Structure probing data (2A3) for a 177-nucleotide construct. The 2A3 profile rests on 606 reads. 2A3 adducts were read by reverse transcription with SuperScript II with manganese. Values cover nucleotides 27 to 126.
RNA sequence: GGGAACGACUCGAGUAGAGUCGAAAAGUCGCUGCUUCUUCCAUGGCGCUUCAGGGACAGAGAUACAGGCGACGCAGAACAACCUGGGUGUAGAGACCCAGGCGACAAGGGAGAUAGAGGAGACACAGGAUGGUAGGGUGUUCGCACCCUACCAUCCAAAAGAAACAACAACAACAAC
Reactivity to 2A3 in 0.01 (KOAc 150mM, MgCl2 10mM, bicine 150mM(pH8.5), 24C), signal-to-noise 2, nucleotides 027 to 126: g000u040c050g020c040u020g030c010u020u000c070u100u000c090c020a100u110g080g000c110g000c060u170u140c140a020g130g140g010a010c000a040g080a000g020a050u100a080c050a040g040g060c000g000a040c010g010c000a030g050a220a040c070a000a060c000c000u000g000g100g010u070g080u140a200g030a000g010a130c000c000c000a000g000g010c000g000a020c060a040a050g060g000g000a050g000a000u190a080g120a020g100g010a030g010a000c010a030c070a120